The record gives the reactivity of an RNA of 177 nucleotides to DMS and 2A3. Conditions: 150 mM KOAc, 10 mM MgCl2 and 150 mM bicine (pH 8.5), 24 C. Values cover nucleotides 27 to 126. The data come from the RNA Mapping Database (RMDB), library OK2TRN. For DMS the reverse transcriptase was MarathonRT. The DMS profile rests on 6,404 reads. For 2A3 the reverse transcriptase was SuperScript II with manganese.
[RMDB]
RNA sequence: GGGAACGACUCGAGUAGAGUCGAAAAGUGUGGGAUAGACGGGACUAGUCUUGGCCGUCGUCUUCCAGGACGAUGCUAAAGGAGUCGGGGUGCAUACCGUGGUUCCACGGAGGAACGCUCCGCCUUGCGAGGCUUAUACUUUCGAGUAUAAGCCUCGAAAAGAAACAACAACAACAAC
Reactivity to DMS in 0.01 (KOAc 150mM, MgCl2 10mM, bicine 150mM(pH8.5), 24C), signal-to-noise 4, nucleotides 027 to 126: g010u000g010u010g000g010g010a090u010a050g010a020c060g000g000g010a070c060u000a090g000u000c100u010u000g010g010c050c050g010u000c000g020u000c030u000u000c140c170a130g000g000a030c020g000a010u010g020c060u000a050a080a080g010g000a060g000u010c010g000g000g000g030u010g000c080a200u010a060c010c010g010u000g000g010u010u010c100c000a030c020g020g000a080g020g000a090a220c080g000c010u000c010c010g010c070c010u000u010g020
Reactivity to 2A3 in 0.01 (KOAc 150mM, MgCl2 10mM, bicine 150mM(pH8.5), 24C), signal-to-noise 3, nucleotides 027 to 126: g070u090g020u080g020g020g010a010u050a060g050a020c030g020g030g040a020c040u080a040g070u000c000u030u050g040g000c040c030g030u010c000g000u010c000u160u070c040c010a020g050g000a000c020g010a010u040g000c050u170a090a030a100g120g000a040g040u050c020g000g000g010g040u050g000c030a050u050a070c000c020g010u010g000g110u300u130c160c000a000c010g000g010a000g000g040a090a010c000g000c030u000c000c000g000c010c000u010u040g030